[RMDB]
RNA sequence: GGGAACGACUCGAGUAGAGUCGAAAAAGCGACUGGGAUCGUCAUCCUGGCUUGUUCGCGUGACCAGGAGAUCCGAGUAGAGGCAUAGCGAACUGCGCACGGAGAAGCCUUGAGGGAAUGCCGUAGGACCCGGGUUCGAUUCCCGGCAGCUCCACUGCAUCUGUGGAGUGUUCGCACUCCACAGAUGAAAAGAAACAACAACAACAAC
Reactivity to DMS in 0.01 (KOAc 150mM, MgCl2 10mM, bicine 150mM(pH8.5), 24C), signal-to-noise 1, nucleotides 027 to 156: a080g010c000g020a160c020u010g000g020g000a010u010c020g000u000c050a210u000c000c000u010g020g070c040u010u010g030u000u000c090g050c100g000u000g000a180c000c000a080g000g000a140g010a040u000c050c040g000a160g000u000a070g010a070g020g050c040a070u000a130g010c020g000a020a090c020u000g000c030g020c070a240c010g000g030a200g040a050a100g050c050c010u000u000g000a240g010g020g000a160a060u020g020c030c090g040u010a100g000g000a040c070c010c040g010g020g040u010u020c070g010a300u010u000c000c010c000g000g000c050a020g010c020u000c000c020a070c090u010g000
Reactivity to 2A3 in 0.01 (KOAc 150mM, MgCl2 10mM, bicine 150mM(pH8.5), 24C), signal-to-noise 2, nucleotides 027 to 156: a000g070c020g060a020c000u090g010g020g000a000u010c000g020u030c020a060u010c000c010u010g000g010c030u130u190g010u010u030c020g000c000g020u000g010a090c000c000a000g000g010a000g000a000u000c030c020g000a020g030u220a020g010a010g010g030c070a100u150a060g010c010g000a040a020c020u070g060c090g020c060a030c070g000g010a030g000a050a050g010c010c050u080u160g070a120g020g020g030a010a070u060g040c010c010g000u040a080g000g120a050c040c030c030g020g000g000u040u060c050g060a080u020u050c000c000c000g000g010c010a010g000c000u010c010c000a050c000u130g000
Chemical mapping of a 207-nucleotide RNA with DMS and 2A3. High DMS reactivity at an A or C suggests that its Watson-Crick edge is free. For DMS the reverse transcriptase was MarathonRT. Conditions: 150 mM KOAc, 10 mM MgCl2 and 150 mM bicine (pH 8.5), 24 C.